[RMDB]
RNA sequence: GGGAACGACUCGAGUAGAGUCGAAAACGCGCUGCUAGGCACGCCUCCGGCCAUCAAGAUAUCCGUUUGAUGCGGUAUUGUAGUUAAGCCAUCGUUGGCAACUUGCCGAGUAGCGGAGGCCUCGUCCGCCCCUACGUACUUUCGAGUACGUAGGGGCAAAAGAAACAACAACAACAAC
Reactivity to 2A3 in 0.01 (KOAc 150mM, MgCl2 10mM, bicine 150mM(pH8.5), 24C), signal-to-noise 6, nucleotides 027 to 126: c060g030c010g000c030u040g000c020u020a010g020g000c030a010c070g010c030c010u010c010c010g030g040c010c020a060u070c060a060a010g020a070u070a080u200c020c040g060u080u130u220g170a140u270g010c000g030g000u010a070u050u110g090u060a130g030u040u070a120a030g010c010c000a060u180c180g140u100u080g010g000c000a020a030c030u050u020g000c000c000g010a030g020u030a010g030c000g010g010a000g020g010c000c040u040c040g080u020c030c050
Reactivity to DMS in 0.01 (KOAc 150mM, MgCl2 10mM, bicine 150mM(pH8.5), 24C), signal-to-noise 2, nucleotides 027 to 126: c080g000c170g020c020u020g070c040u010a050g000g000c050a120c300g000c000c000u000c020c000g010g000c050c030a220u030c000a080a140g000a040u000a070u060c070c050g010u020u010u010g000a100u020g000c030g000g010u000a050u040u000g000u010a140g010u000u000a100a160g020c020c030a030u010c110g010u040u000g050g020c050a050a060c140u000u010g000c000c050g010a090g010u020a030g000c020g000g000a040g000g000c050c010u000c090g000u010c130c110
Conditions: 150 mM KOAc, 10 mM MgCl2 and 150 mM bicine (pH 8.5), 24 C. The record gives the reactivity of an RNA of 177 nucleotides to 2A3 and DMS. Source: RMDB library OK1LIB, as collected in RNAgym. Reactivities are given for positions 27 through 126. Values are in units of 0.01, from 0 to 300, in steps of 10. For 2A3, 4,290 sequencing reads were counted.